An RNA of 207 nucleotides, treated with DMS and 2A3 and read out base by base. DMS adducts were read by reverse transcription with MarathonRT. Reactivities are given for positions 27 through 156. The 2A3 profile rests on 3,972 reads.
RNA sequence: GGGAACGACUCGAGUAGAGUCGAAAAGCCAGUUAGGUGCAGGCUAUAGCUGCCAUCGGCUGACCUAGAGAAGACACAUCAGCUGAUCCUUUGGACCCUGAGACUUGAGACAGAAGUUCUGGGCUUCUCCUCCUGCGGCCUAGCUCUGAGACAAUGAUAAUGAAAAUUAGUUCGCUAAUUUUCAUUAAAAAGAAACAACAACAACAAC
Reactivity to DMS in 0.01 (KOAc 150mM, MgCl2 10mM, bicine 150mM(pH8.5), 24C), signal-to-noise 5, nucleotides 027 to 156: g000c020c010a080g020u000u000a020g040g020u000g010c010a040g010g000c250u000a110u000a080g020c030u010g010c050c070a110u000c050g030g020c010u000g010a050c040c020u000a120g010a160g020a100a070g000a150c070a100c090a130u010c020a040g010c060u000g020a050u010c020c020u010u000u000g020g010a050c030c020c000u010g010a140g010a060c000u000u000g010a200g010a260c090a090g010a080a080g010u000u000c030u000g010g010g010c030u000u000c030u000c020c060u000c010c010u000g020c030g030g010c020c020u000a050g000c030u000c030u000g020a210g000a090c050a110a100u000g010a250
Reactivity to 2A3 in 0.01 (KOAc 150mM, MgCl2 10mM, bicine 150mM(pH8.5), 24C), signal-to-noise 5, nucleotides 027 to 156: g060c010c010a000g000u010u030a010g000g020u020g020c020a000g030g000c040u150a080u190a260g030c070u070g030c050c020a040u020c010g010g000c000u000g010a020c010c060u070a060g030a020g050a240a050g110a040c080a010c010a150u020c000a010g000c010u020g010a100u300c000c010u100u090u080g040g020a050c010c000c000u050g060a060g010a130c020u040u050g030a030g030a150c050a070g140a110a010g030u050u000c010u020g000g010g020c000u100u010c010u030c010c000u020c010c010u000g010c000g080g050c000c000u000a000g000c000u000c060u070g090a060g010a020c080a100a070u090g050a060